[RMDB]
RNA sequence: GGGAACGACUCGAGUAGAGUCGAAAAUAAAAGCAGAUGUGAGAGGGAUAUAGUACAUAGAAGUGGUGGACAACAAGGAACAAAGGUCUACAAAAAUAUAUGUUGCAUUGACACAAGUAGUCUUUACUUCAGAUUUAAAAUACUUUGAGAUACGGAACUAGUGGAGUCGUUUCGACGACUCCACUAGAAAAGAAACAACAACAACAAC
Reactivity to 2A3 in 0.01 (KOAc 150mM, MgCl2 10mM, bicine 150mM(pH8.5), 24C), signal-to-noise 1, nucleotides 027 to 156: u060a020a050a010a030g010c050a010g020a080u070g080u070g060a070g020a000g040g040g000a000u030a020u050a140g020u030a050c020a030u100a080g010a030a000g010u010g010g010u050g000g050a000c000a080a000c000a020a030g060g000a020a020c050a050a070a050g030g000u040c070u170a100c110a010a210a000a080a000u090a130u020a070u080g010u000u000g000c050a040u030u130g010a010c070a000c000a100a050g000u000a040g030u080c000u070u090u130a060c020u090u050c050a000g000a090u060u150u140a060a100a000a030u110a060c010u000u120u120g050a030g000a100u110a070c130g200g000a020a020
Notes: Chemical mapping of a 207-nucleotide RNA with 2A3. The RNA was probed in 150 mM KOAc, 10 mM MgCl2 and 150 mM bicine (pH 8.5) at 24 C. For 2A3, 528 sequencing reads were counted. The data come from the RNA Mapping Database (RMDB), library OK3TST. High 2A3 reactivity points to a flexible backbone, as in loops and unpaired stretches. 2A3 adducts were read by reverse transcription with SuperScript II with manganese.